Structure probing data (2A3) for a 207-nucleotide construct. The RNA was probed in 150 mM KOAc, 10 mM MgCl2 and 150 mM bicine (pH 8.5) at 24 C. Source: RMDB library M2RFPK, as collected in RNAgym.
RNA sequence: GGGAACGACUCGAGUAGAGUCGAAAACCUGUUAUCUGACCAAUAACAGAAUGCACCACAGCGUAAAAUCAUCUGAUUGGGUGAGUUGGUCGCACCGCCAUUUGACGAACGAACGCCAAGCCCAAGCACUACGAGUAUGUGUUCGCACAUACUCGAACUCGGCGUAAUGAUUCGUCAUUACGCCGAGAAAAGAAACAACAACAACAAC
Reactivity to 2A3 in 0.01 (KOAc 150mM, MgCl2 10mM, bicine 150mM(pH8.5), 24C), signal-to-noise 1, nucleotides 027 to 156: c000c000u000g000u000u020a040u000c020u020g030a060c000c000a010a000u020a000a000c000a060g040a080a080u070g060c000a020c030c000a010c030a090g000c030g070u130a140a140a010a070u050c030a010u040c030u070g040a130u050u160g150g020g000u000g000a010g010u000u110g010g000u010c020g060c040a010c020c010g010c020c010a080u000u040u100g090a030c070g010a150a000c010g020a100a010c010g030c060c020a040a010g050c000c040c000a030a010g030c100a050c280u230a050c030g010a000g000u030a000u030g020u000g030u040u060c120g050c040a000c000a000u000a000c000u000c000g000a000a010